[RMDB]
RNA sequence: GGGAACGACUCGAGUAGAGUCGAAAAGUAGAAUCUGUCAAGCAAAACCCCAAAACCUUACACUGAGAGCAUUUAGCCUGAUUACUCUUUAAUUCAAAUCAGGCAAUAGAGAGAAACUCGAGAGGUGAAACGGGAGUAAUGUUCGCAUUACUCCCAACGCAUGACAUAUGUUCGCAUAUGUCAUGCGAAAAGAAACAACAACAACAAC
Reactivity to 2A3 in 0.01 (KOAc 150mM, MgCl2 10mM, bicine 150mM(pH8.5), 24C), signal-to-noise 2, nucleotides 027 to 156: g100u080a010g090a120a040u070c110u120g180u090c050a060a000g010c030a060a040a080a220c030c030c010c030a040a010a100a060c010c030u080u110a060c020a030c090u070g000a000g010a030g100c010a060u080u140u180a050g020c040c010u030g010a000u010u210a160c030u090c080u210u300u210a230a160u180u110c060a130a000a000u000c000a000g010g020c010a000a000u010a000g050a000g010a000g030a040a120a000c010u030c020g090a100g000a010g130g040u020g010a080a090a020c070g010g000g000a000g000u000a000a000u010g000u090u150c130g000c070a000u000u000a000c010u000c000c000c000a000a000